[RMDB]
RNA sequence: GGGAACGACUCGAGUAGAGUCGAAAAUAGGUCGUGUUCGCACGACCUAAGAUAAAAUGCAUAAAAUGCCAGAAACCCGAAACACAAGGGAGUGCACCUGGCCUACGAUGUCGUUCGCGACAUCGAAGGGUUGAUUAAGAUUCGUCUUAAUCAACCCAAAAGAAACAACAACAACAAC
Reactivity to 2A3 in 0.01 (KOAc 150mM, MgCl2 10mM, bicine 150mM(pH8.5), 24C), signal-to-noise 5, nucleotides 027 to 126: u050a000g000g010u000c010g000u000g040u030u060c230g010c070a000c000g000a000c000c000u000a000a000g000a000u090a000a130a020a030u050g000c020a000u120a260a290a110a050u110g000c000c000a000g030a070a060a040c040c010c020g040a140a280a000c100a010c030a100a050g010g020g000a060g040u040g010c020a030c020c010u010g010g010c000c010u060a070c020g000a000u010g000u010c010g000u030u050c220g010c010g070a000c000a000u010c010g020a050a070
Reactivity to DMS in 0.01 (KOAc 150mM, MgCl2 10mM, bicine 150mM(pH8.5), 24C), signal-to-noise 5, nucleotides 027 to 126: u010a000g010g000u000c010g030u010g020u000u020c220g030c010a010c000g010a010c000c000u000a000a010g010a100u010a040a030a050a120u010g000c040a120u010a060a080a120a120u010g000c000c030a020g000a050a140a090c000c000c000g010a120a120a150c200a090c200a090a130g010g010g010a110g020u000g010c040a110c270c010u000g000g020c000c300u010a070c030g000a010u000g020u000c000g000u000u000c240g020c000g000a020c000a000u000c010g000a070a070